[RMDB]
RNA sequence: GGGAACGACUCGAGUAGAGUCGAAAACACCUGGGGGUGAUUUUAUGCCUCACCUCCAGUAGGCACCUUGGUCUCUUUGGGCUAAUCUCUGGCUCCUCUGCACUAACUCUUGCUCUCACCCAGCUAACUAGCAUAGAUCUUUCGAGAUCUAUGCUAGAAAAGAAACAACAACAACAAC
Reactivity to 2A3 in 0.01 (KOAc 150mM, MgCl2 10mM, bicine 150mM(pH8.5), 24C), signal-to-noise 9, nucleotides 027 to 126: c040a020c010c000u000g000g000g000g000g020u010g020a030u030u090u060u190a170u270g100c010c010u000c000a000c000c000u000c000c000a000g000u030a020g010g030c020a040c030c000u040u070g050g020u030c020u000c000u100u080u090g040g010g000c020u030a050a090u100c060u010c040u070g040g000c010u010c010c010u020c020u040g030c030a030c050u070a110a020c010u030c010u050u080g020c010u000c000u010c020a050c000c000c000a010g020c030u020a040a060
Reactivity to DMS in 0.01 (KOAc 150mM, MgCl2 10mM, bicine 150mM(pH8.5), 24C), signal-to-noise 5, nucleotides 027 to 126: c100a130c180c000u010g000g010g010g000g030u000g000a050u010u030u030u060a090u030g010c220c180u000c000a010c000c000u000c000c000a000g010u020a030g000g010c070a070c030c020u010u000g000g000u010c030u010c030u000u000u020g010g000g010c030u010a090a080u020c060u010c040u000g000g010c030u000c020c010u000c010u000g010c060a080c040u010a070a110c050u010c040u030u010g010c020u010c010u000c060a100c030c000c020a090g000c060u010a080a210